[RMDB]
RNA sequence: GGGAACGACUCGAGUAGAGUCGAAAAGCCACGCUAUUCGUAGCGUGGCGGUUAAGAUCUUGACAAAAACUGACAAAAAGUCUAGAUCAAAUAAAGUCAGAACGGUCCGGGAUUUCGAUCCCGGAAAACGGAACAUACCAUUCGUGGUAUGUUCCGUAAAAGAAACAACAACAACAAC
Reactivity to DMS in 0.01 (KOAc 150mM, MgCl2 10mM, bicine 150mM(pH8.5), 24C), signal-to-noise 1, nucleotides 027 to 126: g000c000c000a000c010g040c000u020a020u010u000c220g040u000a020g000c000g060u020g000g000c010g000g000u030u000a070a070g000a010u000c000u000u010g060a030c000a060a080a130a130a100c100u000g000a070c100a120a150a120a070a110g000u000c000u000a000g020a000u000c020a030a110a050u000a040a050a110g000u030c020a010g030a160a100c110g000g030u000c000c000g020g030g000a010u000u000u000c110g020a020u020c010c000c000g000g000a000a000a030
Source: RMDB library M2PK50, as collected in RNAgym. The record gives the reactivity of an RNA of 177 nucleotides to DMS.